[RMDB]
RNA sequence: GGGAACGACUCGAGUAGAGUCGAAAAGUCAAGAAAAAUUAAGCCCAGGUAAAGCAUUCUAUAAACACUUAAUGAACGGUGUUUCUAACAUGUUGCCACUUGUAAUAUCUGGUGGUAUUUUAAUGGCUAGCUAUCUUCCUUUCGAGGAAGAUAGCUAAAAAGAAACAACAACAACAAC
Reactivity to 2A3 in 0.01 (KOAc 150mM, MgCl2 10mM, bicine 150mM(pH8.5), 24C), signal-to-noise 2, nucleotides 027 to 126: g030u000c060a130a130g270a240a010a020a000a050u270u140a040a010g030c020c050c020a010g120g080u120a110a000a030g000c000a000u100u000c000u090a030u030a030a000a000c010a000c050u000u100a200a090u300g110a050a050c040g000g000u000g020u030u000u000c050u030a020a070c020a080u040g000u000u110g000c000c000a000c000u000u030g170u180a110a170u060a180u280c000u000g010g020u050g120g000u050a060u010u000u000u000a150a130u000g000g010c010
Reactivity to DMS in 0.01 (KOAc 150mM, MgCl2 10mM, bicine 150mM(pH8.5), 24C), signal-to-noise 2, nucleotides 027 to 126: g000u050c020a030a050g010a030a000a080a040a060u010u010a110a120g010c100c000c000a070g000g010u030a020a090a140g010c030a050u000u020c090u060a040u000a020a030a020c010a020c040u000u010a090a170u040g000a240a090c250g000g020u000g030u000u000u000c030u010a020a070c180a000u000g000u010u000g010c050c030a070c040u000u000g060u000a050a170u020a120u010c050u000g010g020u000g000g010u000a000u000u000u000u000a010a090u020g010g000c000